[RMDB]
RNA sequence: GGGAACGACUCGAGUAGAGUCGAAAAUGUGGAUGUCCGGGCAUACGCCGAGCUCAACGAGUUCGUGGAGCUGCAGGCGCGCGGUCUGACGGUGCGCCGGCCGUUCCGCAGCCAUCAGACGGUCAAAGGACGAUGUCUAUUUCGAUAGACAUCGUCCAAAAGAAACAACAACAACAAC
Reactivity to 2A3 in 0.01 (KOAc 150mM, MgCl2 10mM, bicine 150mM(pH8.5), 24C), signal-to-noise 2, nucleotides 027 to 126: u140g030u110g030g080a140u110g050u050c090c070g060g010g000c010a070u240a150c040g040c060c000g030a030g000c030u000c000a060a030c140g010a030g190u180u160c040g000u050g000g010a000g000c010u040g030c010a000g010g010c020g000c000g000c050g040g010u000c080u080g100a110c070g070g000u010g020c070g000c020c010g000g000c010c000g020u100u000c000c000g000c020a090g000c010c000a010u030c030a040g160a120c080g020g020u080c010a070a000a080
Reactivity to DMS in 0.01 (KOAc 150mM, MgCl2 10mM, bicine 150mM(pH8.5), 24C), signal-to-noise 1, nucleotides 027 to 126: u070g010u000g000g010a070u030g020u000c000c010g020g000g010c010a030u040a030c110g000c020c080g030a010g030c040u000c030a070a050c080g000a100g000u060u010c000g050u000g000g000a000g020c000u000g000c020a040g010g030c010g000c100g000c000g050g000u050c130u080g000a150c130g020g010u000g030c080g000c000c010g000g050c000c010g000u030u030c010c000g020c050a090g000c000c000a140u030c020a030g000a100c010g000g080u000c080a130a080a100